[RMDB]
Structure probing data (2A3) for a 207-nucleotide construct. The 2A3 profile rests on 494 reads. Reactivities are given for positions 27 through 156.

RNA sequence: GGGAACGACUCGAGUAGAGUCGAAAACACUACAUGAGAGAAUCAAAUAAACAUGUCUCUGAGCCUUGAUGUGCUGUGUACAAUAGGGACCCUCAGCCCUGAGCAACGGGCUGGUUGAGCAGAUUGAUGGAUGAGACUCAAUAGCAAAUACACAGGGGAUGCGAAUCCAUUUCGAUGGAUUCGCAUCAAAAGAAACAACAACAACAAC
Reactivity to 2A3 in 0.01 (KOAc 150mM, MgCl2 10mM, bicine 150mM(pH8.5), 24C), signal-to-noise 1, nucleotides 027 to 156: c010a020c010u160a000c000a090u150g010a070g000a010g030a050a070u120c060a050a140a050u230a020a200a040c060a120u120g030u020c000u000c010u060g030a010g000c060c000u080u150g050a150u070g040u000g030c000u000g070u000g010u020a030c010a020a030u060a090g040g000g060a060c000c000c000u030c010a010g000c000c040c000u100g020a150g120c060a040a100c090g000g000g000c000u000g000g000u040u090g040a000g000c030a000g000a290u150u180g060a080u090g090g000a030u040g040a000g020a040c000u010c070a010a010u010a050g010c000a100a100a060u030a050c080a000c040a020g000g000g050